[RMDB]
Structure probing data (2A3 and DMS) for a 207-nucleotide construct.
The RNA was probed in 150 mM KOAc, 10 mM MgCl2 and 150 mM bicine (pH 8.5) at 24 C.
Values cover nucleotides 27 to 156.
2A3 adducts were read by reverse transcription with SuperScript II with manganese.
RNA sequence: GGGAACGACUCGAGUAGAGUCGAAAACUUCCGAAGAAGGAAAGGUCAAGCAGCGAGACACGAAACCGGUUCUUGUACACCAGCUUGUUGCCUACUACUUGCCAGUCGCCGUUAGGCAGCCUCGCUACCAUCUUGCGCAGCAAAGGUAUCUCCUUGAGCAAUAAAAUUGGUUCGCCAAUUUUAUUGCAAAAGAAACAACAACAACAAC
Reactivity to 2A3 in 0.01 (KOAc 150mM, MgCl2 10mM, bicine 150mM(pH8.5), 24C), signal-to-noise 5, nucleotides 027 to 156: c020u050u010c020c010g060a080a050g030a050a040g030g040a100a050a020g030g030u070c030a030a010g020c000a010g010c050g050a010g020a040c030a010c160g100a130a060a040c100c050g050g020u080u050c040u040u050g050u070a060c060a070c090c010a010g020c020u040u030g030u090u090g030c000c000u020a060c010u010a030c010u050u040g060c030c030a060g020u100c040g040c050c030g070u070u080a030g010g030c000a010g020c020c010u030c030g000c000u030a050c020c020a050u080c040u050u080g020c060g000c050a080g000c020a060a050a020g080g010u060a110u030c070u010c000c000u000u030g020a010
Reactivity to DMS in 0.01 (KOAc 150mM, MgCl2 10mM, bicine 150mM(pH8.5), 24C), signal-to-noise 2, nucleotides 027 to 156: c090u000u000c000c030g030a140a100g010a160a070g030g000a060a110a050g000g010u000c020a090a070g030c040a100g030c000g010a100g010a050c020a100c070g000a070a050a050c060c030g030g050u000u000c080u020u000g010u000a130c130a050c030c000a030g010c040u000u000g010u000u000g000c030c030u010a110c040u000a070c010u020u040g040c030c030a160g000u000c020g030c010c050g000u000u000a110g010g000c070a110g010c020c020u010c030g030c020u000a040c010c010a150u010c080u000u000g000c080g020c070a090g000c030a050a000a090g020g000u000a070u000c060u010c020c010u000u000g020a300